[RMDB]
RNA sequence: GGGAACGACUCGAGUAGAGUCGAAAAGAUAUGGAUCACUCGCGAUAAGCUGGUGUCGGAAACGACAUACAGCUUUUGACGCGAAAUCCUAAGUCAAAACGGUAUUAGAGUUCGCUCUAAUACCGAAGAUAAUAGAUUGCUUCGGCAAUCUAUUAUCAAAAGAAACAACAACAACAAC
Reactivity to DMS in 0.01 (KOAc 150mM, MgCl2 10mM, bicine 150mM(pH8.5), 24C), signal-to-noise 5, nucleotides 027 to 126: g010a060u010a300u000g000g000a010u000c060a100c190u000c010g010c000g030a120u000a010a020g040c000u000g000g020u000g020u000c000g020g010a110a060a170c000g000a010c000a010u000a090c010a010g000c000u000u000u010u000g010a170c050g000c010g020a010a060a010u000c000c000u000a060a160g000u010c030a060a050a130a180c010g000g000u000a000u000u000a010g000a010g010u000u010c270g020c000u000c000u000a010a010u000a000c000c010g000a010a020
Reactivity to 2A3 in 0.01 (KOAc 150mM, MgCl2 10mM, bicine 150mM(pH8.5), 24C), signal-to-noise 3, nucleotides 027 to 126: g040a020u110a020u130g000g000a010u020c050a030c160u000c000g000c000g030a080u030a120a000g000c020u000g000g020u000g010u020c020g020g020a130a100a030c020g020a010c010a020u300a270c000a030g000c000u000u010u020u020g020a010c010g000c010g000a040a070a010u000c010c000u020a260a050g090u040c040a000a010a070a170c010g000g000u010a010u000u000a000g010a000g030u090u160c300g080c120u000c000u000a000a000u000a010c000c000g000a000a000